About this RNA: The data come from the RNA Mapping Database (RMDB), library OK1LIB. Structure probing data (2A3 and DMS) for a 177-nucleotide construct. For 2A3 the reverse transcriptase was SuperScript II with manganese. For DMS the reverse transcriptase was MarathonRT.
RNA sequence: GGGAACGACUCGAGUAGAGUCGAAAAUAAGUAGGCAUGUUCUACUAAAGGUGACAAUAUGUUGAGGAAUAUGCAAUUUGUCGUCAUGUCUGCUACAGGACUACUAGCGAAUAGGCGAGUUCCUCGCGAAACACCUUAUUUUCGAAUAAGGUGUUUCAAAAGAAACAACAACAACAAC
Reactivity to 2A3 in 0.01 (KOAc 150mM, MgCl2 10mM, bicine 150mM(pH8.5), 24C), signal-to-noise 9, nucleotides 027 to 126: u180a030a010g030u010a010g020g000c020a030u040g070u130u100c040u080a120c060u130a100a070a030g150g050u120g030a030c040a060a050u090a070u210g110u120u220g120a140g060g150a140a080u150a060u190g040c020a030a080u030u020u060g020u010c010g010u010c010a010u040g010u000c010u020g030c010u040a060c060a050g030g070a020c020u090a020c000u030a110g060c030g060a140a140u080a190g080g040c040g010a010g000u020u010c000c000u010c030g070c060
Reactivity to DMS in 0.01 (KOAc 150mM, MgCl2 10mM, bicine 150mM(pH8.5), 24C), signal-to-noise 9, nucleotides 027 to 126: u040a050a050g020u000a010g000g010c020a060u020g010u020u010c060u030a080c100u020a060a110a110g010g020u020g020a050c070a050a060u030a130u020g020u010u010g010a100g010g020a080a060u030a070u030g000c020a050a210u010u020u010g020u000c030g000u010c040a030u010g010u000c010u010g010c050u020a070c220a090g000g010a050c060u010a080c090u010a060g000c050g010a070a080u030a070g010g010c050g000a120g000u000u000c000c010u000c070g020c270
Conditions: 150 mM KOAc, 10 mM MgCl2 and 150 mM bicine (pH 8.5), 24 C.